[RMDB]
RNA sequence: GGGAACGACUCGAGUAGAGUCGAAAAGAUAUGGACAUUCCCAUGUGUCGAAGAACUGGAGUCGGAAACGACUCCAGGGAGACACUUGGGAGAUGUCCUAAGUCAAAUCCGUCGGUUCGCCGACGGAGACACGUGGUAACUUCGGUUACCACGUGUCAAAAGAAACAACAACAACAAC
Reactivity to 2A3 in 0.01 (KOAc 150mM, MgCl2 10mM, bicine 150mM(pH8.5), 24C), signal-to-noise 1, nucleotides 027 to 126: g000a040u080a030u180g020g000a000c010a000u010u070c010c020c010a000u080g010u000g010u000c030g170a300a030g000a050a060c020u000g000g000a010g000u000c030g030g000a100a030a040c030g000a000c030u000c020c000a000g030g010g000a020g000a010c000a000c000u010u000g040g000g000a160g060a020u020g000u000c000c010u010a080a010g070u040c060a000a060a210u040c010c000g040u020c000g080g130u050u110c300g060c120c000g000a020c030g010g010a000
Reactivity to DMS in 0.01 (KOAc 150mM, MgCl2 10mM, bicine 150mM(pH8.5), 24C), signal-to-noise 1, nucleotides 027 to 126: g000a070u040a300u000g020g000a010c000a010u020u020c020c010c000a000u000g040u010g000u000c000g010a240a170g010a140a220c000u000g000g010a020g010u000c000g010g000a120a080a150c000g010a000c000u000c000c000a000g020g000g000a040g030a010c010a000c000u010u010g000g000g010a010g020a040u000g020u000c000c020u010a010a110g000u010c030a090a090a290u020c010c000g010u000c000g040g020u010u000c300g030c000c020g020a020c000g000g000a010

Record summary:
Chemical mapping of a 177-nucleotide RNA with 2A3 and DMS. The 2A3 profile rests on 2,799 reads. DMS (dimethyl sulfate) methylates the pairing face of unpaired adenines and cytosines.